[RMDB]
RNA sequence: GGGAACGACUCGAGUAGAGUCGAAAAAUAAAUGAUGAGUUAACGCUCAUCAAAGUAACGAAAGAUGGCGAUUCGGUACACAUGGAAACAUGCGCCAAACGGAUAAAUACAGAGAAUCCGAAAAAAACACAUUGAAUAGUUUCGACUAUUCAAUGUGAAAAGAAACAACAACAACAAC
Reactivity to 2A3 in 0.01 (KOAc 150mM, MgCl2 10mM, bicine 150mM(pH8.5), 24C), signal-to-noise 3, nucleotides 027 to 126: a020u090a000a060a040u060g000a000u000g000a000g010u050u100a050a010c060g000c010u010c020a000u000c000a010a030a000g020u010a030a000c040g030a100a040a040g150a090u060g000g000c020g050a050u030u100c050g030g040u100a020c050a000c000a060u040g010g020a050a060a000c020a040u060g030c020g000c000c000a040a010a010c000g000g000a010u030a080a180a020u240a170c060a030g160a000g090a130a020u000c020c000g040a150a040a000a000a000a000a000
Reactivity to DMS in 0.01 (KOAc 150mM, MgCl2 10mM, bicine 150mM(pH8.5), 24C), signal-to-noise 3, nucleotides 027 to 126: a070u010a080a120a130u000g000a000u000g010a000g010u000u000a110a220c300g000c000u000c000a000u010c000a020a050a090g010u000a050a100c070g020a080a070a090g010a080u020g010g010c040g010a180u000u000c020g020g000u000a040c030a300c040a030u000g000g010a150a050a110c030a040u010g010c010g010c010c010a020a140a140c070g010g010a090u000a050a040a110u000a110c160a090g010a140g010a080a030u000c000c010g030a000a010a040a110a040a110a150
This 177-nucleotide RNA was probed chemically with 2A3 and DMS. It was measured as part of the RMDB library M2PK90. The DMS profile rests on 2,669 reads. 2A3 adducts were read by reverse transcription with SuperScript II with manganese.